[RMDB]
RNA sequence: GGGAACGACUCGAGUAGAGUCGAAAAGAGAACUUAUGUUGGUCGCUUUUGCUGGAAAACCACUCUCCUUCAGUGAGUUGUGGAUCCCUAAAUGUUGAAAUUGCAGAUGAGAUAGGCCAAGGUGGCAGACACGCCCAGUAUUCGUACUGGGCGUGUCAAAAGAAACAACAACAACAAC
Reactivity to DMS in 0.01 (KOAc 150mM, MgCl2 10mM, bicine 150mM(pH8.5), 24C), signal-to-noise 1, nucleotides 027 to 126: g030a180g040a090a070c070u000u000a110u010g010u000u000g020g020u000c080g000c020u000u030u000u000g020c030u010g010g000a060a030a080a130c000c020a010c020u000c000u000c010c020u020u000c260a150g000u000g000a000g010u020u010g000u000g010g010a070u020c040c010c070u000a120a070a150u000g010u040u010g000a130a110a140u010u000g040c020a090g000a090u040g020a040g020a100u000a150g020g000c010c040a060a040g020g030u020g030g020c100a170
An RNA of 177 nucleotides, treated with DMS and read out base by base. It was measured as part of the RMDB library OK2TST.